[RMDB]
RNA sequence: GGGAACGACUCGAGUAGAGUCGAAAAUGCUAGAUCGUCAAUGGUUUCUAAUAUGUUUGACGGAGAGAGUAAUUGAUGAAUACCAGAGAUGUCUAAAAUAGAAGUUCGGAAUUGAAUCAAUGUGAAUGAUUUUUGCUAAAACGGAGCAUGGCGCAACCGUACAUACUGGGUUCGCCCAGUAUGUACGAAAAGAAACAACAACAACAAC
Reactivity to DMS in 0.01 (KOAc 150mM, MgCl2 10mM, bicine 150mM(pH8.5), 24C), signal-to-noise 3, nucleotides 027 to 156: u000g000c010u010a070g010a090u000c060g040u000c020a070a170u010g040g000u010u000u000c020u010a100a130u010a110u010g040u010u010u010g020a150c070g010g010a150g000a150g020a060g010u000a050a120u000u000g020a150u020g030a120a110u000a130c020c020a080g000a260g000a070u000g010u000c020u000a060a060a010a150u000a070g010a090a060g010u000u010c090g040g000a080a080u000u010g000a050a100u000c030a040a080u010g010u000g020a100a100u010g000a090u000u000u000u000u000g000c040u000a070a040a080a140c080g010g010a040g050c060a070u010g010g010c040g000c010a050a180c070
Reactivity to 2A3 in 0.01 (KOAc 150mM, MgCl2 10mM, bicine 150mM(pH8.5), 24C), signal-to-noise 6, nucleotides 027 to 156: u130g000c030u030a040g010a130u110c060g020u030c040a040a060u060g070g050u000u080u000c030u060a120a140u110a130u200g130u070u120u120g050a050c050g030g000a030g000a000g000a000g030u080a110a120u090u100g060a040u070g030a080a030u040a120c000c010a020g010a000g010a070u040g030u070c040u080a030a090a050a050u110a040g070a090a020g030u070u080c070g050g060a090a130u110u050g010a050a030u070c040a020a060u140g070u050g110a050a040u030g040a060u030u060u050u120u120g000c020u070a070a020a030a030c030g020g020a000g010c030a030u030g010g000c030g010c030a010a040c030